Source: RMDB library M2RFPK, as collected in RNAgym. The record gives the reactivity of an RNA of 207 nucleotides to 2A3. For 2A3, 497 sequencing reads were counted. The reactions ran in a buffer of 150 mM KOAc, 10 mM MgCl2 and 150 mM bicine (pH 8.5), at 24 C.
RNA sequence: GGGAACGACUCGAGUAGAGUCGAAAAGAGCGAUUAGACAAAGGGGUAGAGCUACAUAUUAGAUAGCUGUAUAAUCGUUCAAGUUACAUCAAAACAUCGUCAAUAUUUAUUACUUACUUUCCUUUCUGCCAGAGUACGGUAUUCGUACCGUACUCAACAGGUUGACGACUUUCGAGUCGUCAACCUGAAAAGAAACAACAACAACAAC
Reactivity to 2A3 in 0.01 (KOAc 150mM, MgCl2 10mM, bicine 150mM(pH8.5), 24C), signal-to-noise 1, nucleotides 027 to 156: g000a000g000c000g010a010u010u010a000g010a080c050a040a080a060g000g010g000g040u060a010g030a030g070c010u010a010c010a190u300a200u080u240a120g140a220u050a000g090c000u000g000u060a040u010a030a020u010c000g000u030u000c050a070a000g000u000u110a040c050a040u080c050a080a090a060a070c010a000u050c010g270u160c090a060a090u010a040u250u200u050a130u010u070a000c040u090u060a010c030u060u010u120c000c000u040u190u000c000u070g050c000c000a030g000a000g000u000a000c010g070g050u000a000u020u010c020g010u000a000c000c000g000u000a000c000u000c000a000a000